About this RNA: An RNA of 177 nucleotides, treated with 2A3 and DMS and read out base by base. High 2A3 reactivity points to a flexible backbone, as in loops and unpaired stretches. DMS adducts were read by reverse transcription with MarathonRT. Source: RMDB library OK1LIB, as collected in RNAgym. For DMS, 2,839 sequencing reads were counted.
RNA sequence: GGGAACGACUCGAGUAGAGUCGAAAAGGUCACGCGGUCUGGAACCUCGCGGGCGCAGCCACUCCCAAAAAGGGAGCAGGCACGUCUUAGGAAGGCUGAACGUAAGGCACGCUUGGAUCGUGAAGAGGACUCAGGUUUGAUUCGUCAAACCUGAGUCAAAAGAAACAACAACAACAAC
Reactivity to 2A3 in 0.01 (KOAc 150mM, MgCl2 10mM, bicine 150mM(pH8.5), 24C), signal-to-noise 4, nucleotides 027 to 126: g050g020u040c020a010c070g030c020g010g030u010c050u060g040g060a100a070c000c000u000c010g050c060g000g000g000c000g000c000a000g010c000c000a010c000u000c020c000c000a100a180a080a030a080g000g000g000a000g000c000a010g000g000c000a020c020g000u000c000u040u090a080g040g100a100a020g060g000c080u100g110a100a000c020g020u100a030a060g030g000c030a050c230g010c020u050u080g030g020a060u060c040g020u050g050a110a030g050a040g120
Reactivity to DMS in 0.01 (KOAc 150mM, MgCl2 10mM, bicine 150mM(pH8.5), 24C), signal-to-noise 2, nucleotides 027 to 126: g010g000u010c050a140c080g050c050g000g000u000c020u020g010g000a120a140c040c010u000c030g000c240g000g000g000c010g010c020a040g030c020c010a100c000u000c000c000c000a050a030a080a180a150g000g000g000a010g030c060a000g010g000c000a080c030g000u010c000u000u020a300g000g030a070a050g000g000c240u020g010a030a150c090g030u020a070a070g010g000c090a060c080g040c100u000u000g000g020a040u000c020g000u030g000a160a050g020a090g010